This 115-nucleotide RNA was probed chemically with DMS.
For DMS, 1,538 sequencing reads were counted.
It was measured as part of the RMDB library P50LIB.
Reactivities are rounded to 0.1 and cut off at 0 and 3.
[RMDB]
RNA sequence: GGGAACGACUCGAGUAGAGUCGAAAAGGCGGAAAAGGCGGAAAAACCGCCAAAACCGCCAAAAAUAAAAAUAAAAACAUUUUCUUCGGAAAAUGAAAAGAAACAACAACAACAAC
Reactivity to DMS in 0.01 (KOAc 150mM, MgCl2 10mM, bicine 150mM(pH8.5), 24C), signal-to-noise 1, nucleotides 027 to 095: g000g020c030g000g000a020a010a160a300g000g000c020g000g000a110a120a080a150a110c020c010g000c020c000a000a020a090a040c000c020g040c040c010a000a000a060a060a050u000a020a050a020a070a040u060a060a030a040a040a080c060a090u030u000u000u010c050u110u060c120g050g000a000a010a100a010u020g010a000